RNA sequence: GGGAACGACUCGAGUAGAGUCGAAAACAGAUGGUGUGAGUGGCUCCAGAAGACUCUUCUCUUCUCUGUGCAAGAGCCAGGAAGGCUCUAGAAAGGAAUGUCUGAGGAAGCAUCGGAGACUGGGUCCGGCUAGCCGGACAUUCGUGUCCGGCUAGCCAAAAGAAACAACAACAACAAC
Reactivity to DMS in 0.01 (KOAc 150mM, MgCl2 10mM, bicine 150mM(pH8.5), 24C), signal-to-noise 1, nucleotides 027 to 126: c070a130g010a040u000g010g030u030g030u010g000a100g030u010g010g020c040u010c000c030a060g030a220a110g010a090c030u010c100u000u010c000u020c060u000u000c120u000c070u010g000u020g050c170a150a050g010a020g020c010c000a120g030g030a120a220g010g000c040u000c010u000a010g020a010a000a060g010g010a020a020u020g030u010c040u000g020a300g010g010a070a070g010c030a040u010c030g010g010a110g020a120c060u000g000g000g000u000c070c150
Structure probing data (DMS) for a 177-nucleotide construct. DMS (dimethyl sulfate) methylates the pairing face of unpaired adenines and cytosines. For DMS, 761 sequencing reads were counted. Reactivities are given for positions 27 through 126. The RNA was probed in 150 mM KOAc, 10 mM MgCl2 and 150 mM bicine (pH 8.5) at 24 C.